The data come from the RNA Mapping Database (RMDB), library M2RFPK. Structure probing data (2A3) for a 207-nucleotide construct. Values cover nucleotides 27 to 156.
RNA sequence: GGGAACGACUCGAGUAGAGUCGAAAAUUGCGCUUACCUAUUUAGGCAUACUUCUCAGGAUGGCGCGUUGCAGUCCAACAAGAUCCAGGGACUGUACAGAAUUUUCCUAUACCUCGAGUCGGGUUUGAAAACGUUAGGCACUUCGGUGCCUAACGAACGAGAAACUCAAGUUCGCUUGAGUUUCUCGAAAAGAAACAACAACAACAAC
Reactivity to 2A3 in 0.01 (KOAc 150mM, MgCl2 10mM, bicine 150mM(pH8.5), 24C), signal-to-noise 2, nucleotides 027 to 156: u030u050g010c000g030c000u050u140a080c020c000u070a110u080u130u120a060g030g030c060a120u200a300c070u070u100c050u030c100a020g020g020a110u070g000g000c040g010c030g020u040u040g000c010a000g020u000c010c000a050a050c050a230a120g120a260u090c110c040a060g010g000g010a000c000u000g010u000a000c040a010g220a110a040u010u020u000u000c020c010u060a070u030a150c050c060u000c000g000a000g010u020c020g000g000g020u070u030u080g160a090a090a000a000c000g010u000u000a000g000g000c000a000c010u020u040c250g050g000u010g000c010c000u000a000a000c000g000a010a000